About this RNA
This 207-nucleotide RNA was probed chemically with DMS and 2A3. For 2A3, 2,385 sequencing reads were counted. For 2A3 the reverse transcriptase was SuperScript II with manganese. High 2A3 reactivity points to a flexible backbone, as in loops and unpaired stretches.
RNA sequence: GGGAACGACUCGAGUAGAGUCGAAAAGUGGGUUCGCCCACAAGCUCUCCUAAGUCAGUAUUUCGAGAGCAUGAUCGAACAACAGCAUUAUCGGAAACGAUAAUGACAUGUUCGAUAUGCUCUGUACUGAUAUGGACGCCUACAAGUUCGCUUGUAAACCUACCCAGUCUUUCGAGACUGGGUAGGUAAAAGAAACAACAACAACAAC
Reactivity to DMS in 0.01 (KOAc 150mM, MgCl2 10mM, bicine 150mM(pH8.5), 24C), signal-to-noise 1, nucleotides 027 to 156: g000u000g000g000g050u000u020c220g050c000c030c000a000c010a050a050g030c060u000c080u010c020c010u010a190a180g000u010c000a010g020u000a040u000u020u010c190g000a050g020a070g020c010a020u000g000a000u010c000g000a010a000c020a040a090c090a140g030c010a030u000u010a030u000c000g000g020a240a070a300c000g080a000u000a030a000u000g000a000c090a300u000g000u000u000c000g000a010u000a060u000g010c000u000c000u000g030u000a010c000u000g030a010u000a300u000g000g010a030c150g000c000c020u010a050c050a020a140g020u000u000c110g020c010u000u010g000u000a070a150
Reactivity to 2A3 in 0.01 (KOAc 150mM, MgCl2 10mM, bicine 150mM(pH8.5), 24C), signal-to-noise 3, nucleotides 027 to 156: g000u010g020g040g010u050u160c240g120c010c020c010a010c000a000a030g060c020u060c000u000c080c000u080a160a040g000u010c000a000g010u020a030u040u170u250c260g120a040g000a000g010c000a000u100g220a020u010c000g000a000a000c010a020a030c030a060g050c000a010u000u000a000u000c020g040g010a130a020a090c020g000a010u020a020a010u000g160a050c010a000u020g000u000u000c000g000a000u000a000u020g000c000u010c000u020g000u000a000c000u000g000a010u020a030u060g010g020a020c110g050c050c030u070a030c030a030a080g050u040u080c170g100c140u050u030g070u120a120a270